The record gives the reactivity of an RNA of 177 nucleotides to DMS. DMS (dimethyl sulfate) methylates the pairing face of unpaired adenines and cytosines. The RNA was probed in 150 mM KOAc, 10 mM MgCl2 and 150 mM bicine (pH 8.5) at 24 C. The DMS profile rests on 1,454 reads. Reactivities are given for positions 27 through 126.
RNA sequence: GGGAACGACUCGAGUAGAGUCGAAAAAACAGUGGUCAGCCGUCAACUGUGGUGGACAAUACCCUCAUUCUCAUGCUGGUUGUUGAGUACUGCAAAUCUUGGCACUUUAAGCAGAGUGGAGUCAAAACUUAUGCAUACCCUUCGGGGUAUGCAUAAGAAAAGAAACAACAACAACAAC
Reactivity to DMS in 0.01 (KOAc 150mM, MgCl2 10mM, bicine 150mM(pH8.5), 24C), signal-to-noise 2, nucleotides 027 to 126: a050a040c070a030g040u020g030g010u010c010a120g010c040c040g000u030c040a080a080c100u020g000u010g010g010u000g030g010a050c110a090a080u000a100c030c000c030u000c040a130u000u010c040u000c030a070u010g010c070u020g020g000u000u000g030u000u000g010a070g020u000a040c070u000g030c110a040a090a070u000c050u050u000g000g000c050a040c090u000u000u010a070a070g010c040a020g030a060g030u000g010g000a070g040u000c120a060a040a060a150